[RMDB]
An RNA of 177 nucleotides, treated with 2A3 and DMS and read out base by base.
Conditions: 150 mM KOAc, 10 mM MgCl2 and 150 mM bicine (pH 8.5), 24 C.

RNA sequence: GGGAACGACUCGAGUAGAGUCGAAAACGGGAUGGCGAUAGCCUCGGUGUCCUGCUGGUCGUCGGCGUCGUCGUGGACCUUCGGGCCGCGGCCGGAUGGCUCGGGUUCGGGGGCGACAUGGCGGUGCACGUAUAUCUGGGUUCGCCCAGAUAUACGUAAAAGAAACAACAACAACAAC
Reactivity to 2A3 in 0.01 (KOAc 150mM, MgCl2 10mM, bicine 150mM(pH8.5), 24C), signal-to-noise 4, nucleotides 027 to 126: c040g010g030g030a050u090g040g020c030g050a050u080a100g090c030c020u040c040g140g180u060g040u010c010c010u030g010c050u040g070g050u070c040g010u010c050g070g020c010g000u020c000g000u000c010g000u020g010g010a030c010c000u010u010c010g000g010g000c010c010g300c050g150g000c020c040g100g140a170u300g030g010c100u110c120g040g000g000u010u010c010g010g000g000g010g010c030g000a040c010a010u020g000g000c020g010g000u020g020c020
Reactivity to DMS in 0.01 (KOAc 150mM, MgCl2 10mM, bicine 150mM(pH8.5), 24C), signal-to-noise 6, nucleotides 027 to 126: c070g010g010g000a060u000g010g010c020g010a080u010a130g010c120c060u000c050g010g000u010g000u000c020c030u000g010c090u000g010g010u000c040g010u000c050g010g010c010g020u000c010g010u000c010g030u000g000g000a300c010c000u000u010c020g010g000g000c010c010g010c140g010g010c010c010g010g010a090u010g020g010c000u010c080g010g000g010u000u000c010g010g010g000g000g020c080g010a110c010a010u000g000g000c000g000g000u000g010c030
Notes:
It was measured as part of the RMDB library OK2TRN. Values are in units of 0.01, from 0 to 300, in steps of 10. Reactivities are given for positions 27 through 126.